[RMDB]
RNA sequence: GGGAACGACUCGAGUAGAGUCGAAAACGAUCAGUACGUUCGCGUACUGAUCGAAGCUACUGGAGACAGUAGCAAGUCUAUCACCAUGCCGCCCCCAGGCAUGGAAAAGUAGAUCUACCAGCCUGAUCUACAGAUAGACAAGGGGGAUGGCUGGAAACAUAGGAUAGCUCUUCGGAGCUAUCCUAUGAAAAGAAACAACAACAACAAC
Reactivity to 2A3 in 0.01 (KOAc 150mM, MgCl2 10mM, bicine 150mM(pH8.5), 24C), signal-to-noise 2, nucleotides 027 to 156: c020g010a000u000c000a000g010u000a010c010g040u020u130c270g010c010g100u000a000c010u000g000a000u000c000g000a010a000g020c000u000a000c000u000g020g020a040g000a030c000a000g000u000a000g000c000a000a010g000u000c000u010a010u010c010a010c040c000a010u010g010c000c010g090c030c030c010c050c100a030g010g020c000a000u000g000g020a030a000a020a030g000u010a010g000a000u010c010u040a150c010c000a010g000c000c000u040g000a000u000c000u000a000c010a010g000a000u010a000g000a000c060a080a120g040g000g000g000g010a050u120g000g000c010u000g010g000a010a000a000
Reactivity to DMS in 0.01 (KOAc 150mM, MgCl2 10mM, bicine 150mM(pH8.5), 24C), signal-to-noise 2, nucleotides 027 to 156: c020g000a000u000c000a000g050u010a000c000g010u000u010c300g080c040g030u010a000c010u000g010a000u000c000g020a010a040g000c000u000a010c000u000g000g010a300g010a260c000a020g010u000a020g000c000a090a050g000u000c020u010a030u000c010a300c020c000a020u000g020c020c000g000c000c000c000c000c010a300g040g030c020a010u000g000g000a000a030a060a180g030u000a000g000a030u000c000u000a030c010c010a170g010c040c000u000g010a000u000c020u010a020c000a050g000a040u000a000g030a030c020a130a100g030g000g010g010g030a150u020g010g050c000u000g010g000a190a120a230